[RMDB]
RNA sequence: GGGAACGACUCGAGUAGAGUCGAAAAUGAGACGCUGUCCAACCUAAGCUUGAUAAUCAGCUUCACGAACCGUGACCCCGUGUUGAUGUUCCUCAUGUUCUACGUACCCGGAUUUUCCGCCACCAGUAAGAUCACGCCCGCGGUGGAGAUGCUGAUGCGUAUGAUAUGUUUUCGAACAUAUCAUACGAAAAGAAACAACAACAACAAC
Reactivity to DMS in 0.01 (KOAc 150mM, MgCl2 10mM, bicine 150mM(pH8.5), 24C), signal-to-noise 2, nucleotides 027 to 156: u020g000a140g030a100c080g000c020u010g030u000c030c030a100a080c030c020u000a090a080g010c030u000u000g010a150u000a080a140u000c040a050g000c040u000u000c050a090c020g020a090a050c020c020g000u000g010a210c030c010c010c030g000u000g040u000u000g010a140u010g020u000u000c020c020u000c030a120u000g000u000u000c030u000a080c060g010u000a120c030c020c020g040g010a130u000u000u000u000c020c000g070c040c020a060c030c030a080g010u000a070a080g010a130u010c060a090c050g010c040c020c040g000c050g000g020u000g000g020a080g000a090u000g020c030u000g010a130u000g020
Reactivity to 2A3 in 0.01 (KOAc 150mM, MgCl2 10mM, bicine 150mM(pH8.5), 24C), signal-to-noise 5, nucleotides 027 to 156: u150g010a030g020a030c070g030c140u070g020u060c020c030a040a050c050c040u100a070a030g030c030u100u100g050a090u170a190a070u080c020a000g020c000u030u030c070a050c060g060a090a060c050c050g030u040g090a090c010c030c000c020g030u000g040u010u070g050a090u050g030u060u050c010c000u040c040a050u110g050u060u020c030u060a050c050g050u060a070c030c010c000g060g030a050u090u070u060u030c030c040g030c030c010a050c020c010a050g020u060a070a040g040a090u070c020a020c070g020c000c010c000g010c010g000g020u050g030g040a090g000a020u090g000c000u040g010a050u100g010
Source: RMDB library OK3TST, as collected in RNAgym. This 207-nucleotide RNA was probed chemically with DMS and 2A3. For DMS, 7,859 sequencing reads were counted. DMS adducts were read by reverse transcription with MarathonRT. The reactions ran in a buffer of 150 mM KOAc, 10 mM MgCl2 and 150 mM bicine (pH 8.5), at 24 C.